[RMDB]
RNA sequence: GGGAACGACUCGAGUAGAGUCGAAAAGAACGAGUUCAGCCCAUUUCGUAUAUCCUUUCCUCGGCUGAACUCGAAGGCCUUGAGAACGAGGAUGGAAAGGAUAUACGAAAUGUUCUCAAGGCCAAGACUACUGGUAACUAUUCGUAGUUGCCAGUAGAAAAGAAACAACAACAACAAC
Reactivity to 2A3 in 0.01 (KOAc 150mM, MgCl2 10mM, bicine 150mM(pH8.5), 24C), signal-to-noise 9, nucleotides 027 to 126: g040a030a010c000g000a000g000u000u000c000a000g000c020c040c020a010u000u010u000c000g010u010a050u000a060u180c010c020u040u160u000c000c000u010c010g000g000c000u000g000a000a000c000u000c000g000a030a020g000g000c000c000u010u000g000a000g000a000a000c010g000a000g000g000a000u020g010g110a040a020a010g090g070a040u020a010u000a090c000g000a000a000a000u010g000u000u000c000u000c000a000a000g000g000c000c000a010a000g010a010
Reactivity to DMS in 0.01 (KOAc 150mM, MgCl2 10mM, bicine 150mM(pH8.5), 24C), signal-to-noise 9, nucleotides 027 to 126: g010a190a040c010g000a020g010u000u000c010a010g010c030c010c090a010u000u000u000c000g010u000a050u000a090u010c090c070u000u000u000c000c000u000c020g000g000c010u000g000a010a010c010u000c000g010a040a040g020g020c010c000u000u000g000a020g010a010a020c010g020a030g010g000a020u000g000g000a070a100a270g000g010a090u000a040u000a010c010g010a010a010a010u000g010u000u000c000u000c010a010a010g000g010c000c000a010a010g000a190
Description
Structure probing data (2A3 and DMS) for a 177-nucleotide construct. For DMS the reverse transcriptase was MarathonRT. It was measured as part of the RMDB library OK2TRN.